[RMDB]
RNA sequence: GGGAACGACUCGAGUAGAGUCGAAAAGAAAGAAAUGGCCAGAAUCAGGUAGGCAGUGUACUGUUAGCUGGCUGUGUUGGGUCAAUUCAGCAGCCACGACUACCCUGCCACUUGCUUCUGGAUAAAAAAACUGCUAGCAGUUCGCUGCUAGCAGUUUAAAAGAAACAACAACAACAAC
Reactivity to 2A3 in 0.01 (KOAc 150mM, MgCl2 10mM, bicine 150mM(pH8.5), 24C), signal-to-noise 3, nucleotides 027 to 126: g110a040a070a000g080a030a240a020u200g150g000c000c000a000g000a010a010u010c000a000g010g000u160a140g300g000c000a000g010u000g010u000a110c270u100g040u050u010a060g030c200u050g000g000c000u010g010u010g150u120u100g100g000g040u170c140a070a120u150u110c070a080g000c020a000g000c000c000a000c000g000a000c000u000a000c030c000c010u020g000c000c000a000c000u030u010g000c000u000u000c000u000g000g010a000u030a000a030a000a000
Reactivity to DMS in 0.01 (KOAc 150mM, MgCl2 10mM, bicine 150mM(pH8.5), 24C), signal-to-noise 2, nucleotides 027 to 126: g000a100a090a080g000a030a080a070u020g010g000c000c000a010g000a010a000u010c020a000g000g000u000a080g020g010c000a000g020u000g050u040a000c210u000g020u000u000a030g010c260u000g000g000c000u000g000u020g000u070u000g010g010g000u070c300a050a130u140u000c010a120g010c000a010g010c030c050a020c020g010a010c010u000a000c060c040c000u010g000c000c000a020c000u000u000g000c050u000u000c000u000g030g020a020u000a030a000a160a090
The record gives the reactivity of an RNA of 177 nucleotides to 2A3 and DMS.
2A3 adducts were read by reverse transcription with SuperScript II with manganese.
The reactions ran in a buffer of 150 mM KOAc, 10 mM MgCl2 and 150 mM bicine (pH 8.5), at 24 C.